Chemical mapping of a 177-nucleotide RNA with 2A3 and DMS. For DMS, 7,445 sequencing reads were counted. For DMS the reverse transcriptase was MarathonRT. 2A3 adducts were read by reverse transcription with SuperScript II with manganese. Source: RMDB library OK1LIB, as collected in RNAgym. For 2A3, 6,096 sequencing reads were counted. The RNA was probed in 150 mM KOAc, 10 mM MgCl2 and 150 mM bicine (pH 8.5) at 24 C.
[RMDB]
RNA sequence: GGGAACGACUCGAGUAGAGUCGAAAAGAAAAAGGAAAACCUGGAAAAGAAAAUCCAGGACCAAGGAACAAACCGUGAAAGACGCGAAGCACGCAAGAACGCGUCCACGGAACUUGCGUGGAGAAAACAUUAUACCGUAUUUCGAUACGGUAUAAUGAAAAGAAACAACAACAACAAC
Reactivity to 2A3 in 0.01 (KOAc 150mM, MgCl2 10mM, bicine 150mM(pH8.5), 24C), signal-to-noise 5, nucleotides 027 to 126: g050a020a020a010a000a000g080g020a060a090a000a000c000c010u010g020g070a040a110a100a080g190a080a180a030a060u000c010c000a000g000g000a000c010c000a010a030g080g000a020a080c050a130a080a030c030c010g010u050g040a160a160a030g020a010c000g030c010g070a050a040g110c050a040c120g080c050a040a060g040a130a020c000g000c000g020u000c010c000a000c000g000g010a010a040c010u020u060g030c040g080u100g020g030a070g080a040a060a000a000
Reactivity to DMS in 0.01 (KOAc 150mM, MgCl2 10mM, bicine 150mM(pH8.5), 24C), signal-to-noise 5, nucleotides 027 to 126: g000a030a090a100a180a100g000g010a150a110a100a100c000c000u000g000g010a030a030a060a240g030a110a170a120a100u010c000c000a010g030g000a050c060c030a070a020g000g020a160a080c170a040a090a100c020c010g000u000g000a100a110a140g000a030c020g010c000g000a130a090g010c070a060c080g020c130a050a050g040a070a120c000g010c020g000u000c060c060a010c020g000g000a060a040c040u000u000g000c100g010u000g020g020a110g010a080a050a070a090